Chemical mapping of a 177-nucleotide RNA with 2A3 and DMS. The data come from the RNA Mapping Database (RMDB), library RFM100.
[RMDB]
RNA sequence: GGGAACGACUCGAGUAGAGUCGAAAAGAGGCCUUCGGACUGGCACAGGGACGUUGGCAACGACGACCCAGUGCCGGAAAGUUCGUCAAACUUGGUCAUUUAGAGGAAGAAAAAGUCGUAACAAGGUUUCACACUAGGAGUUCGCUCCUAGUGUGAAAAAAGAAACAACAACAACAAC
Reactivity to 2A3 in 0.01 (KOAc 150mM, MgCl2 10mM, bicine 150mM(pH8.5), 24C), signal-to-noise 1, nucleotides 027 to 126: g060a010g000g050c000c000u020u030c000g000g010a030c000u020g010g000c010a000c000a030g000g000g000a030c000g020u040u000g000g010c020a020a020c000g030a000c000g040a050c010c000c030a040g020u000g000c000c000g000g000a000a020a000g010u020u030c000g080u100c060a030a050a120c030u030u050g020g020u070c040a070u000u040u010a080g000a050g080g070a030a030g080a030a150a000a000a010g020u040c050g020u040a050a010c060a060a020g040g020u030
Reactivity to DMS in 0.01 (KOAc 150mM, MgCl2 10mM, bicine 150mM(pH8.5), 24C), signal-to-noise 2, nucleotides 027 to 126: g030a020g010g010c000c000u010u020c000g000g040a300c000u000g040g030c020a010c010a080g020g000g000a140c000g000u020u030g020g000c250a060a070c020g020a000c000g000a080c040c000c000a070g000u000g030c000c040g000g000a030a190a060g000u020u000c030g020u050c140a030a060a080c140u040u030g000g020u000c030a080u000u020u040a080g000a120g000g000a010a020g020a040a080a070a070a000g000u000c050g000u040a010a150c180a100a120g000g010u070